[RMDB]
RNA sequence: GGGAACGACUCGAGUAGAGUCGAAAAGAUAUGGACGUCAUAUGGUUGAGCUGAAGAGCAUCGAUCAAAUUGGUUCGGAAACGAACCUUUGGGAGCUCUCAGCUCAACCAUAUGACGUCCUAAGUCACAAUAGGUACUCCUUCGGGAGUACCUAUUGAAAAGAAACAACAACAACAAC
Reactivity to DMS in 0.01 (KOAc 150mM, MgCl2 10mM, bicine 150mM(pH8.5), 24C), signal-to-noise 2, nucleotides 027 to 126: g000a030u000a300u000g000g000a010c000g000u010c000a000u000a020u000g000g000u000u010g000a000g000c020u010g010a050a070g020a020g010c010a230u010c200g000a150u010c010a010a030a100u010u020g020g020u010u000c000g050g000a100a100a250c000g000a000a000c000c030u000u000u000g000g000g000a070g000c000u010c010u010c000a000g000c000u000c000a010a000c000c000a000u000a000u000g010a000c000g010u000c000c000u010a000a060g000u000c050a240

This 177-nucleotide RNA was probed chemically with DMS. The data come from the RNA Mapping Database (RMDB), library TTRINS.